[RMDB]
RNA sequence: GGGAACGACUCGAGUAGAGUCGAAAAAUGGCUUGGGUCAGGGAAUCCAGGAGCUGUGUUAGGAUUCGACUGAACUUGAGAUGGUAGACAAGAUCCAGUAGUGAGCAGCGAACACAUUGCUUCCGCCGGUUCUCAGCUCAAUACAGGGCACGAGGGCCCAUUGAUCUAUGUUCGCAUAGAUCAAUGGAAAAGAAACAACAACAACAAC
Reactivity to DMS in 0.01 (KOAc 150mM, MgCl2 10mM, bicine 150mM(pH8.5), 24C), signal-to-noise 5, nucleotides 027 to 156: a100u010g010g010c020u000u000g010g010g030u000c030a150g040g010g000a070a040u000c020c030a140g020g010a110g020c010u010g000u000g020u000u000a120g010g000a190u010u000c030g010a080c020u010g000a060a060c020u010u010g000a130g000a110u010g000g000u000a100g000a140c050a080a070g010a170u000c030c010a070g040u000a060g010u000g000a080g010c060a100g010c070g010a050a040c060a080c060a090u010u000g010c000u010u000c040c030g020c050c080g000g020u000u010c000u010c030a140g010c010u000c020a060a090u000a090c100a110g000g000g020c020a060c050g010a090g010g000g010c070
Reactivity to 2A3 in 0.01 (KOAc 150mM, MgCl2 10mM, bicine 150mM(pH8.5), 24C), signal-to-noise 9, nucleotides 027 to 156: a010u050g030g010c020u020u030g030g010g020u110c050a060g050g020g030a030a020u030c020c020a050g040g020a020g020c060u040g020u020g050u130u130a100g050g060a130u040u030c030g050a100c060u030g020a110a060c010u030u040g020a050g000a100u070g050g030u080a050g030a120c070a110a020g020a090u040c020c020a020g030u050a020g020u060g060a020g020c020a000g020c030g030a040a010c060a000c010a080u040u150g020c010u120u050c020c040g040c040c040g020g000u030u000c010u000c010a010g010c010u000c000a000a010u120a070c080a060g030g010g010c070a020c120g030a070g000g020g000c010